[RMDB]
RNA sequence: GGGAACGACUCGAGUAGAGUCGAAAAUAAACGCAGCUACAGUGCUCGAUAUUUACCUAGCUGGUUAGGAAAAGUCGGUAGCUGGGCUGAGCAGGAAACCGGCGAUUACCAGUUGCCCAAAGAGUUACUUUGCAUAGAAGUUCGCUUCUAUGCAAAGAAAAGAAACAACAACAACAAC
Reactivity to 2A3 in 0.01 (KOAc 150mM, MgCl2 10mM, bicine 150mM(pH8.5), 24C), signal-to-noise 3, nucleotides 027 to 126: u140a020a110a000c030g000c060a020g000c010u160a180c020a040g030u000g040c070u100c100g020a010u030a160u070u050u050a110c010c000u010a020g000c090u220g190g080u150u010a030g020g010a040a040a030a040g000u000c010g000g040u020a030g010c010u010g020g000g000c020u030g010a020g040c030a020g030g110a080a040a050c040c000g040g000c020g050a070u020u090a030c000c000a030g030u020u020g070c010c020c020a000a130a030g140a010g030u040u060a060
Reactivity to DMS in 0.01 (KOAc 150mM, MgCl2 10mM, bicine 150mM(pH8.5), 24C), signal-to-noise 5, nucleotides 027 to 126: u010a090a110a110c070g010c030a010g010c010u000a130c050a060g010u000g010c060u010c030g020a060u000a040u000u000u000a130c010c020u000a030g010c140u010g020g020u010u010a030g010g000a080a050a090a290g010u000c010g000g020u000a050g010c000u010g000g010g010c030u000g000a080g030c050a110g010g020a060a090a050c090c050g000g010c020g000a090u000u000a120c030c020a090g000u010u000g020c000c010c080a080a110a110g000a100g010u000u000a100
Description
The record gives the reactivity of an RNA of 177 nucleotides to 2A3 and DMS. The reactions ran in a buffer of 150 mM KOAc, 10 mM MgCl2 and 150 mM bicine (pH 8.5), at 24 C. 2A3 adducts were read by reverse transcription with SuperScript II with manganese. For DMS the reverse transcriptase was MarathonRT.